[RMDB]
RNA sequence: GGGAACGACUCGAGUAGAGUCGAAAAGUCUAGCGAUUUAGGGAUCCGAUCCGGGUAGCAGAACUCAACUGCAUGAGUAGACACGCAAGUCGCGUAUUGGCCGAACGGCCAAGGAUCUGCUAGACGAAAAUGAUAUGAGUUUCGACUCAUAUCAUUUAAAAGAAACAACAACAACAAC
Reactivity to 2A3 in 0.01 (KOAc 150mM, MgCl2 10mM, bicine 150mM(pH8.5), 24C), signal-to-noise 9, nucleotides 027 to 126: g000u000c010u010a000g000c010g050a060u060u070u240a210g070g030g030a020u000c020c020g010a050u030c040c020g050g040g070u090a030g020c030a020g040a120a060c040u060c150a070a120c060u080g020c050a070u070g010a020g050u110a050g050a030c050a010c060g030c030a100a130g200u180c050g010c010g010u030a070u080u070g050g010c000c010g070a160a060c140g020g000c010c000a010a030g000g010a000u010c040u090g000c000u000a000g000a000c000g000a010
Reactivity to DMS in 0.01 (KOAc 150mM, MgCl2 10mM, bicine 150mM(pH8.5), 24C), signal-to-noise 9, nucleotides 027 to 126: g010u000c000u000a010g020c010g000a100u000u010u010a160g010g000g000a040u000c020c010g010a160u010c040c040g010g000g020u010a120g010c040a040g000a090a080c110u010c160a070a100c080u010g010c120a110u010g010a090g010u000a110g000a090c140a050c040g010c060a090a120g010u010c140g010c030g010u000a140u000u000g000g010c000c000g000a080a080c160g010g000c020c020a010a050g000g000a010u000c000u010g030c000u000a000g000a010c010g000a040